[RMDB]
Description: Chemical mapping of a 177-nucleotide RNA with 2A3 and DMS. DMS (dimethyl sulfate) methylates the pairing face of unpaired adenines and cytosines.
RNA sequence: GGGAACGACUCGAGUAGAGUCGAAAAGCCUCUUCCUCAGCGGCAACAUACUGAUCUGCUGUAUCAGCACACCCAUCCAAGUAACGGUGAUACACCACGGUAUAUCCUUCACGGACAAGCUGAAGCCGCAGGAUUAGAAUUUCGAUUCUAAUCCUGCAAAAGAAACAACAACAACAAC
Reactivity to 2A3 in 0.01 (KOAc 150mM, MgCl2 10mM, bicine 150mM(pH8.5), 24C), signal-to-noise 4, nucleotides 027 to 126: g040c010c000u000c010u050u040c010c010u050c020a020g000c020g040g000c030a040a030c030a120u160a060c040u060g060a180u050c030u090g020c030u050g070u070a050u060c020a010g050c020a030c000a040c050c010c010a050u040c030c030a110a030g040u040a110a030c100g030g050u040g020a020u030a060c050a020c020c030a030c030g020g000u040a070u010a020u120c010c000u070u110c050a040c100g030g040a040c040a090a010g010c020u050g060a090a020g060c060c080
Reactivity to DMS in 0.01 (KOAc 150mM, MgCl2 10mM, bicine 150mM(pH8.5), 24C), signal-to-noise 5, nucleotides 027 to 126: g000c030c000u000c090u000u000c040c030u010c070a070g010c090g010g020c080a060a090c130a100u000a100c060u010g000a080u010c090u010g020c100u000g020u010a050u010c030a050g010c030a080c100a060c060c010c040a110u010c060c070a050a100g010u000a110a080c140g010g000u000g010a090u000a040c040a060c050c040a120c100g030g020u000a050u010a110u000c030c010u010u010c140a090c150g010g000a040c090a050a100g000c060u010g010a080a150g000c240c110
For 2A3, 7,786 sequencing reads were counted.